[RMDB]
RNA sequence: GGGAACGACUCGAGUAGAGUCGAAAACCAGGCUGGAGUGCAGUGGGACAAUCACAGUUCACUGCAGCCUGAAAUUUCUGGGCUCAAGUGAUCCUCCUCCCUGUGUCUCACUAGUAGCUGGGGACUACCCCACUGAUAUGUUCGCAUAUCAGUGGGGAAAAGAAACAACAACAACAAC
Reactivity to 2A3 in 0.01 (KOAc 150mM, MgCl2 10mM, bicine 150mM(pH8.5), 24C), signal-to-noise 3, nucleotides 027 to 126: c010c000a000g030g020c010u030g020g180a060g050u020g030c020a010g040u030g010g060g080a110c090a060a040u130c000a030c010a110g080u080u080c010a020c000u060g030c030a000g000c000c010u010g050a100a060a040u140u140u050c090u090g010g020g000c000u040c100a120a090g020u010g060a080u040c000c010u000c000c020u030c010c020c000u060g030u040g020u050c010u010c040a060c020u030a030g070u050a010g040c030u030g000g010g000g010a010c020u090a070
Reactivity to DMS in 0.01 (KOAc 150mM, MgCl2 10mM, bicine 150mM(pH8.5), 24C), signal-to-noise 3, nucleotides 027 to 126: c110c000a050g000g040c010u000g020g000a080g050u000g000c150a080g010u000g020g000g000a130c210a080a120u010c100a060c100a080g020u010u010c000a000c010u000g000c100a000g000c020c000u010g000a040a060a100u010u000u000c060u000g010g010g010c020u000c040a080a080g030u000g000a050u010c040c020u010c020c020u000c030c010c000u000g000u010g000u000c050u000c000a050c050u010a110g010u000a050g000c040u000g000g010g020g000a120c110u000a160
Background: An RNA of 177 nucleotides, treated with 2A3 and DMS and read out base by base. The RNA was probed in 150 mM KOAc, 10 mM MgCl2 and 150 mM bicine (pH 8.5) at 24 C. The data come from the RNA Mapping Database (RMDB), library OK2TRN. For DMS the reverse transcriptase was MarathonRT.